[RMDB]
RNA sequence: GGGAACGACUCGAGUAGAGUCGAAAAGAUGGAGACAGGAAGUAGAAGAUGAUGCGCAAAGAGAUCGAGAAGGGCACUAACCGCCAGAUAGUGAAUACUCGAGAGCGCUGGCGGUACUUCCUAAGAACACUGCGUAAUGGUUCGCCAUUACGCAGUGAAAAGAAACAACAACAACAAC
Reactivity to 2A3 in 0.01 (KOAc 150mM, MgCl2 10mM, bicine 150mM(pH8.5), 24C), signal-to-noise 4, nucleotides 027 to 126: g070a020u170g010g060a050g020a080c050a030g040g010a000a000g010u060a010g040a170a060g050a080u190g030a050u120g060c030g000c030a030a180a030g070a030g000a080u090c050g000a020g020a130a140g060g050g020c000a000c010u040a040a010c000c010g000c020c000a010g010a040u090a030g060u060g030a060a050u130a160c010u010c020g060a080g010a040g080c010g000c010u000g010g010c000g010g010u000a020c000u000u010c000c000u020a040a020g020a040a000
Reactivity to DMS in 0.01 (KOAc 150mM, MgCl2 10mM, bicine 150mM(pH8.5), 24C), signal-to-noise 3, nucleotides 027 to 126: g000a090u020g020g020a070g010a100c160a020g050g000a020a010g040u000a100g000a080a070g000a190u020g000a090u050g000c060g040c050a050a110a090g010a080g030a100u000c020g020a040g000a130a090g010g010g000c010a050c020u020a050a070c030c060g020c050c050a000g030a100u000a020g000u000g000a060a060u000a140c040u000c020g010a040g000a200g000c030g000c000u000g020g000c050g000g000u010a020c020u010u000c000c010u020a070a130g010a130a170